[RMDB]
RNA sequence: GGGAACGACUCGAGUAGAGUCGAAAAGCCGACCGGCUGGCGGCCGAGGUGAACCGCCGCCGACGGGAGUUGUUGCGCCGCAACAACUUAGAUGGCACCUUGCAGGAGAUCAAGAAGCUGCUCGACGCCUGGUUAACAACUUCGGUUGUUAACCAGGAAAAGAAACAACAACAACAAC
Reactivity to DMS in 0.01 (KOAc 150mM, MgCl2 10mM, bicine 150mM(pH8.5), 24C), signal-to-noise 1, nucleotides 027 to 126: g020c010c000g000a180c060c010g060g010c020u000g030g010c020g000g020c090c070g030a180g000g010u000g010a090a160c030c030g000c000c000g010c020c010g010a020c050g000g000g010a020g000u010u000g010u010u020g010c020g010c220c140g020c000a010a030c010a000a010c020u000u000a040g030a080u000g010g000c040a150c020c010u000u000g020c090a080g000g010a090g020a040u000c130a100a150g000a120a130g020c010u010g000c040u000c090g000a090c280g010
Reactivity to 2A3 in 0.01 (KOAc 150mM, MgCl2 10mM, bicine 150mM(pH8.5), 24C), signal-to-noise 1, nucleotides 027 to 126: g000c000c000g020a060c010c000g060g020c120u170g040g000c000g000g000c070c030g080a090g110g040u230g050a050a090c010c010g030c000c010g000c000c010g000a010c040g040g010g060a010g000u000u020g010u000u010g000c260g230c170c140g040c040a000a000c000a000a000c020u000u040a090g010a090u160g020g030c050a010c000c000u000u160g000c060a040g030g110a170g070a110u120c070a120a040g030a040a000g060c040u050g020c030u020c020g040a060c040g020